[RMDB]
RNA sequence: GGGAACGACUCGAGUAGAGUCGAAAAGAUAUGGACCCACGUAGACAUGGAUGCAAUGAUGACUAUGCCCAGUCGGAAACGACUGGCAUAGUCAUCAUUGCAUCCAACAGCUACUGGGUCCUAAGUCCAAAGGGAUAUCCUUCGGGAUAUCCCUUUGAAAAGAAACAACAACAACAAC
Reactivity to DMS in 0.01 (KOAc 150mM, MgCl2 10mM, bicine 150mM(pH8.5), 24C), signal-to-noise 1, nucleotides 027 to 126: g000a110u010a300u010g000g000a000c000c000c000a040c300g030u000a000g030a060c020a210u000g000g000a030u020g000c000a040a010u000g000a050u000g000a060c000u000a010u000g000c300c030c080a010g100u020c000g030g000a060a120a240c020g050a050c000u010g010g010c000a000u010a000g030u000c020a000u000c010a010u000u010g000c000a000u000c000c000a010a010c280a130g020c000u010a000c000u010g010g000g000u000c000c000u000a010a080g010u000c040